[RMDB]
An RNA of 177 nucleotides, treated with DMS and read out base by base. For DMS, 681 sequencing reads were counted. Reactivities are given for positions 27 through 126. For DMS the reverse transcriptase was MarathonRT.
RNA sequence: GGGAACGACUCGAGUAGAGUCGAAAAGAUAUGGAGCAAGGCGGUACAGGAUAACCAUCGGAAACGAUGGCUAAUACUGUACCCGCUGAUGACCUCCUAAGUCAAAAGCUUAUGUUCGCAUAAGCAAGAGAGCGUCAAUGUUCGCAUUGACGCUCUCAAAAGAAACAACAACAACAAC
Reactivity to DMS in 0.01 (KOAc 150mM, MgCl2 10mM, bicine 150mM(pH8.5), 24C), signal-to-noise 1, nucleotides 027 to 126: g010a160u040a300u100g000g000a010g030c000a090a140g000g030c000g020g030u030a000c000a040g000g000a080u000a160a030c040c000a000u010c000g010g000a120a080a130c030g000a000u000g000g020c010u000a070a040u010a020c020u010g000u030a030c030c080c040g020c000u000g000a050u010g000a050c300c000u000c000c010u000a020a090g000u010c070a060a080a080a120g000c010u000u000a000u000g000u000u030c170g000c000a010u000a010a000g030c020a060a010